[RMDB]
Chemical mapping of a 177-nucleotide RNA with DMS. Conditions: 150 mM KOAc, 10 mM MgCl2 and 150 mM bicine (pH 8.5), 24 C.
RNA sequence: GGGAACGACUCGAGUAGAGUCGAAAAGAUAUGGACCAUUCGGGAGAGGCGCUUUCGGAAACGAAAGCCCUCGACGAUCGAGAUGGUCCUAAGUCAAAAGAGCGUUACCCUUCGGGGUAACGCUCAACUCUGUAGGGUUGUUCGCAACCCUACAGAGAAAAGAAACAACAACAACAAC
Reactivity to DMS in 0.01 (KOAc 150mM, MgCl2 10mM, bicine 150mM(pH8.5), 24C), signal-to-noise 1, nucleotides 027 to 126: g000a020u010a100u020g000g000a010c000c000a010u000u010c000g000g020g000a020g010a000g030g000c250g000c000u000u000u000c010g020g000a020a010a090c000g010a000a000a010g010c000c000c000u000c000g000a050c190g000a010u000c000g000a010g030a010u000g020g020u010c000c000u010a000a060g000u000c040a110a130a130a130g000a030g000c000g030u000u000a000c010c000c010u000u010c170g010g020g000g020u010a000a020c000g000c000u010c010a000a040